RNA sequence: GGGAACGACUCGAGUAGAGUCGAAAAUCUAUCAAAUUCGUUUGAUAGAAAACCCCCCGUAGGCACCAAGAUCGAGCUACGGACAUCUAAGAGUGCAAAUAAACAGCCCCCCAUUCGUGGGGGGCAAAACUAUAUCUCGGUUCGCCGAGAUAUAGUUAAAAGAAACAACAACAACAAC
Reactivity to DMS in 0.01 (KOAc 150mM, MgCl2 10mM, bicine 150mM(pH8.5), 24C), signal-to-noise 1, nucleotides 027 to 126: u020c010u000a030u000c000a000a000a020u000u000c090g030u000u000u010g030a020u000a000g010a020a080a270a250c050c020c000c030c000c040g020u020a100g030g080c040a020c040c040a100a080g010a010u000c090g000a190g000c120u000a090c190g010g010a120c180a070u000c060u010a030a110g040a110g000u000g000c000a100a070a030u000a030a080a130c210a150g000c020c010c000c000c020c000a080u000u000c150g010u000g020g010g010g010g010g010c000a000a000